This 177-nucleotide RNA was probed chemically with DMS and 2A3. Conditions: 150 mM KOAc, 10 mM MgCl2 and 150 mM bicine (pH 8.5), 24 C. 2A3 adducts were read by reverse transcription with SuperScript II with manganese. For DMS the reverse transcriptase was MarathonRT.
RNA sequence: GGGAACGACUCGAGUAGAGUCGAAAAGCAGUGGUAGAAAUUGUGAGCAAGAUAAAGCCGGAAGUGACGUCUUCAAAAGAACGAGCGGAGAGAGAUAUAUCCAUGGUGGUGUCAGGCUUGACCCCUAAUUAGCUUCAAUAUUCGUAUUGAAGCUAAUAAAAGAAACAACAACAACAAC
Reactivity to DMS in 0.01 (KOAc 150mM, MgCl2 10mM, bicine 150mM(pH8.5), 24C), signal-to-noise 9, nucleotides 027 to 126: g010c050a050g020u010g010g010u010a040g010a060a080a100u010u010g010u000g000a070g010c050a060a070g010a070u010a060a080a120g010c030c040g010g010a080a070g020u000g010a090c120g000u000c020u000u000c090a060a060a100a100g000a060a080c100g000a130g010c070g010g000a070g000a080g000a060g000a080u000a070u000a080u010c040c040a090u000g010g020u000g010g020u010g010u000c050a060g010g010c070u000u000g010a120c050c020c010c080u000a060
Reactivity to 2A3 in 0.01 (KOAc 150mM, MgCl2 10mM, bicine 150mM(pH8.5), 24C), signal-to-noise 5, nucleotides 027 to 126: g020c040a010g030u030g060g060u100a070g090a100a170a100u100u090g030u040g050a040g010c020a040a000g020a110u120a140a080a010g020c020c010g020g010a050a020g040u030g080a050c030g030u020c010u090u040c060a130a130a030a060g040a090a030c040g010a020g020c030g040g000a040g000a000g010a000g010a030u020a020u010a020u160c020c020a050u100g060g000u040g030g000u040g050u020c020a010g070g000c000u020u040g040a050c030c000c010c000u020a050